[RMDB]
RNA sequence: GGGAACGACUCGAGUAGAGUCGAAAAGGUUUUAUCCAGCGGUUUGCCGCUCAGAGCCGCGCGCAGCCAUAAUCCAUCAAUCAGCGCGGCCAGGCCGUAGCCCGCUUCCUGUGCCUGUUCGCGCGGCCACGUGCGUGUACUUCGGUACACGCACGUGAAAAGAAACAACAACAACAAC
Reactivity to DMS in 0.01 (KOAc 150mM, MgCl2 10mM, bicine 150mM(pH8.5), 24C), signal-to-noise 1, nucleotides 027 to 126: g010g000u000u010u000u010a080u020c080c100a140g000c020g030g010u000u020u010g040c000c030g030c010u000c060a110g020a180g000c020c030g030c010g020c020g020c070a070g000c060c080a030u020a030a150u000c090c080a080u010c070a100a110u000c190a140g010c050g040c100g010g010c060c040a000g000g000c030c090g000u000a140g000c090c020c000g000c090u000u000c020c060u000g010u020g020c140c010u000g000u000u000c020g020c020g020c000g000g000c050
Reactivity to 2A3 in 0.01 (KOAc 150mM, MgCl2 10mM, bicine 150mM(pH8.5), 24C), signal-to-noise 1, nucleotides 027 to 126: g000g010u090u040u100u190a070u120c040c030a000g010c030g000g020u110u180u170g100c000c020g040c000u040c030a050g050a020g020c000c020g040c020g010c000g030c010a010g050c060c000a140u200a090a050u060c020c020a070u060c080a080a200u150c060a030g040c000g010c010g010g000c000c000a000g010g000c010c010g020u010a000g000c000c000c000g040c060u070u050c020c050u060g050u090g070c000c000u040g030u090u070c000g020c000g020c010g000g100c050